Chemical mapping of a 207-nucleotide RNA with 2A3 and DMS.
The data come from the RNA Mapping Database (RMDB), library M2RFPK.
For 2A3 the reverse transcriptase was SuperScript II with manganese.
DMS adducts were read by reverse transcription with MarathonRT.
RNA sequence: GGGAACGACUCGAGUAGAGUCGAAAAUCGCGUUGGCUGCCUAAUUCAAGGAAUUAGCGUGCCUUCAUGCUAAGGGUUUGUUAUCUGCUAAAACCCGGUGCAUUCAUCAAUGCAGGUUAAGCCAAAGAAACGGCUCACGAAUUCGUUCGUGAGCCAAGUAAAAUCACGAAUUCGUUCGUGAUUUUACAAAAGAAACAACAACAACAAC
Reactivity to 2A3 in 0.01 (KOAc 150mM, MgCl2 10mM, bicine 150mM(pH8.5), 24C), signal-to-noise 6, nucleotides 027 to 156: u110c020g010c020g050u010u000g020g000c030u070g050c030c020u030a030a020u050u040c120a250a120g200g030a060a030u010u010a020g020c060g080u040g010c000c000u000u050c050a050u070g000c010u030a040a060g030g020g010u030u010u020g080u050u150a150u110c090u110g050c060u100a040a040a010a010c000c010c000g000g010u030g000c000a050u040u210c030a070u070c070a120a120u100g030c020a000g050g000u120u180a100a020g030c030c020a050a090a020g120a020a110a020c090g000g000c000u010c000a000c010g010a010a020u100u110c190g040u050u000c010g000u040g030a000g000c000c000a000a000
Reactivity to DMS in 0.01 (KOAc 150mM, MgCl2 10mM, bicine 150mM(pH8.5), 24C), signal-to-noise 4, nucleotides 027 to 156: u000c050g030c080g010u010u000g020g010c060u010g010c090c020u000a050a060u000u000c020a150a180g040g030a060a080u000u000a030g000c030g020u000g000c020c020u000u000c020a060u010g010c000u010a250a160g000g010g000u000u010u010g010u000u000a070u000c070u020g000c070u000a080a060a040a050c000c000c010g010g090u010g040c020a060u010u000c060a130u000c090a110a200u000g010c030a030g000g010u000u000a080a100g010c030c020a050a090a140g000a070a090a120c130g010g020c000u000c000a020c000g010a020a090u000u000c300g030u000u000c000g000u000g000a010g020c020c000a000a020